[RMDB]
RNA sequence: GGGAACGACUCGAGUAGAGUCGAAAAGUAAUAGAUAACUGGAUGCAGCGUAGGCGUCAACGCAUAUCCAGUACGAAUGGUAGCUGUAAAUAAAAUAUGGCGCCUAGUACAACUACCAACAGAAGGAUAAGCGAUGGUGAUGUCAAUCACAUUUGCACGGUGCAUCAUGAUUCGUCAUGAUGCACCGAAAAGAAACAACAACAACAAC
Reactivity to 2A3 in 0.01 (KOAc 150mM, MgCl2 10mM, bicine 150mM(pH8.5), 24C), signal-to-noise 1, nucleotides 027 to 156: g050u050a010a230u060a100g130a050u060a160a060c000u000g040g000a000u030g110c180a070g000c150g010u020a080g000g000c000g000u010c000a000a000c000g000c010a000u050a000u110c000c000a000g000u030a030c060g000a080a040u150g000g000u000a020g010c030u030g010u020a000a060a070u190a100a150a010a050u100a080u010g000g000c030g040c040c050u000a020g010u000a000c000a000a070c020u000a000c020c030a000a010c020a020g160a100a030g010g000a040u000a250a000g010c010g010a000u120g070g040u020g000a010u000g050u190c050a140a000u080c000a000c000a040u040u000u150g070c020a010
An RNA of 207 nucleotides, treated with 2A3 and read out base by base. The data come from the RNA Mapping Database (RMDB), library OK3TST. Conditions: 150 mM KOAc, 10 mM MgCl2 and 150 mM bicine (pH 8.5), 24 C. For 2A3, 567 sequencing reads were counted.